[RMDB]
RNA sequence: GGGAACGACUCGAGUAGAGUCGAAAAUGUCGUCGCAACGCUCCACAUACCAGCGAUGAGUGUCCACAACGCGCUGAGGAUGAACAUGGCUGCUACUCCAUAGGCGAAGCCUAGGCCCAGCCCCUCGAAUACUCGUAUCGUUCGCGAUACGAGUAUUAAAAGAAACAACAACAACAAC
Reactivity to 2A3 in 0.01 (KOAc 150mM, MgCl2 10mM, bicine 150mM(pH8.5), 24C), signal-to-noise 1, nucleotides 027 to 126: u110g000u020c020g010u020c020g000c030a060a040c050g020c040u010c030c030a050c030a060u140a060c040c010a000g010c010g020a030u040g050a040g060u060g020u000c040c020a080c020a110a080c050g060c010g000c080u020g020a030g090g050a060u100g030a050a030c040a080u110g040g000c030u050g000c010u040a050c020u040c040c040a070u050a050g060g020c070g090a060a020g000c000c000u020a020g000g050c010c030c000a010g020c020c000c010c000u030c020g040
Reactivity to DMS in 0.01 (KOAc 150mM, MgCl2 10mM, bicine 150mM(pH8.5), 24C), signal-to-noise 5, nucleotides 027 to 126: u010g000u010c040g020u000c020g020c060a090a100c130g010c050u000c040c060a070c110a080u010a130c100c050a070g010c070g010a060u010g020a100g030u000g000u010c060c030a080c090a090a100c110g000c090g010c040u000g000a090g010g010a080u000g000a090a100c090a080u010g000g010c020u000g000c030u000a070c040u000c020c040a060u000a050g010g010c040g010a110a130g000c020c010u000a070g010g000c040c030c010a110g000c020c000c010c020u000c080g000